[RMDB]
RNA sequence: GGGAACGACUCGAGUAGAGUCGAAAAUCAUCGAUCGCGGAGAAGUCGACGUGCUGGGCGUAGCUGUUUGUCACCAUCAUCUCCUCAUACCACUGAAUGAAAAGCGACGCCUCGAUGAGGCCGUUAGAGGAUAGGCGCUAUUCGUAGCGCCUAUCCUAAAAGAAACAACAACAACAAC
Reactivity to 2A3 in 0.01 (KOAc 150mM, MgCl2 10mM, bicine 150mM(pH8.5), 24C), signal-to-noise 2, nucleotides 027 to 126: u120c040a000u000c070g140a040u090c040g000c050g070g040a050g000a160a020g090u070c030g010a020c000g080u150g040c040u070g040g000g000c050g000u060a010g020c030u000g060u050u050u070g030u090c040a000c070c000a060u040c000a070u000c000u000c000c020u080c000a010u040a110c000c000a040c030u150g010a050a040u090g010a030a040a000a010g000c000g020a020c020g020c020c010u000c060g020a080u300g000a020g030g040c060c030g110u070u000a070g010